[RMDB]
Background: Chemical mapping of a 207-nucleotide RNA with 2A3 and DMS. The reactions ran in a buffer of 150 mM KOAc, 10 mM MgCl2 and 150 mM bicine (pH 8.5), at 24 C. DMS adducts were read by reverse transcription with MarathonRT. It was measured as part of the RMDB library OK3TST.
RNA sequence: GGGAACGACUCGAGUAGAGUCGAAAAGUUACUUCUGCGAAAAUCAUCGCCGAUUAUACCGAUGACCUGCCGACCGUUGAAGCGAUGGCGGAAGAAAAAUCCGGCAAAGUUUUCCGCCUGGGUAACGCGUGGUUUAUCUCUAUCGACGAAAUCAAAGUAAUUCUCCACAUUUCGAUGUGGAGAAUUAAAAAGAAACAACAACAACAAC
Reactivity to 2A3 in 0.01 (KOAc 150mM, MgCl2 10mM, bicine 150mM(pH8.5), 24C), signal-to-noise 2, nucleotides 027 to 156: g010u030u050a030c030u080u000c010u020g020c010g030a100a110a050a150u080c060a060u030c020g020c030c010g020a020u030u050a080u190a250c080c070g030a060u080g050a030c010c000u060g010c050c000g030a090c000c010g040u050u080g070a110a030g070c050g060a030u080g020g000c000g000g000a030a000g010a010a210a010a010a010u070c040c020g030g040c080a140a100a060g030u080u020u060u030c010c010g050c040c050u050g040g010g070u040a040a000c060g020c030g020u050g000g000u090u060u090a070u000c070u000c020u030a060u120c010g050a090c050g030a090a060a000u070c090a060a020a040g040
Reactivity to DMS in 0.01 (KOAc 150mM, MgCl2 10mM, bicine 150mM(pH8.5), 24C), signal-to-noise 1, nucleotides 027 to 156: g030u010u000a010c050u000u010c010u060g000c030g010a070a100a100a050u000c030a120u010c000g030c050c030g020a150u020u000a140u010a090c060c030g040a040u000g000a070c010c030u000g010c010c000g010a140c060c020g000u000u010g000a120a150g030c070g020a110u000g000g020c020g000g050a050a070g000a030a030a090a100a060u000c050c090g000g020c000a100a180a230g000u000u000u000u000c000c030g010c010c000u030g000g000g000u000a030a090c020g020c050g030u000g000g010u020u000u000a050u010c030u000c070u000a110u010c090g010a080c010g010a030a070a190u010c100a020a080a150g040